[RMDB]
The record gives the reactivity of an RNA of 177 nucleotides to DMS and 2A3.
RNA sequence: GGGAACGACUCGAGUAGAGUCGAAAAUCAUUGGCUUCGCUGCGCGCUGCGUUGCCUAGGCUUCAGAUGCUUCGUACUGUUGCCUACGUUGCAAUUUCCAAACGCUAAUGCGAAAGUGUGCAAACAACGGAAUCUAGGAGUUCGCUCCUAGAUUCCGAAAAGAAACAACAACAACAAC
Reactivity to DMS in 0.01 (KOAc 150mM, MgCl2 10mM, bicine 150mM(pH8.5), 24C), signal-to-noise 1, nucleotides 027 to 126: u020c040a100u020u000g030g000c000u010u000c010g000c010u010g000c190g030c040g020c040u000g010c160g000u000u000g000c010c020u010a010g010g000c040u010u000c030a030g010a160u000g020c090u020u000c140g010u020a090c020u000g000u000u010g030c020c030u000a000c100g000u000u000g000c020a030a080u000u000u000c040c050a060a050a080c130g000c020u000a120a170u000g000c010g000a030a040a120g010u000g020u000g010c050a040a080a140c280a040a160
Reactivity to 2A3 in 0.01 (KOAc 150mM, MgCl2 10mM, bicine 150mM(pH8.5), 24C), signal-to-noise 2, nucleotides 027 to 126: u060c030a000u030u170g040g020c020u020u010c010g000c060u090g000c020g000c000g000c010u000g000c010g050u010u000g020c000c000u010a010g000g000c000u030u000c010a020g020a220u160g080c020u180u210c110g070u090a080c020u020g000u010u020g000c010c010u030a040c090g090u090u100g010c040a010a070u050u040u060c030c000a080a000a000c030g010c040u140a110a090u170g030c010g030a050a020a020g020u020g000u030g040c040a040a040a070c000a000a070

Reactivities are given for positions 27 through 126.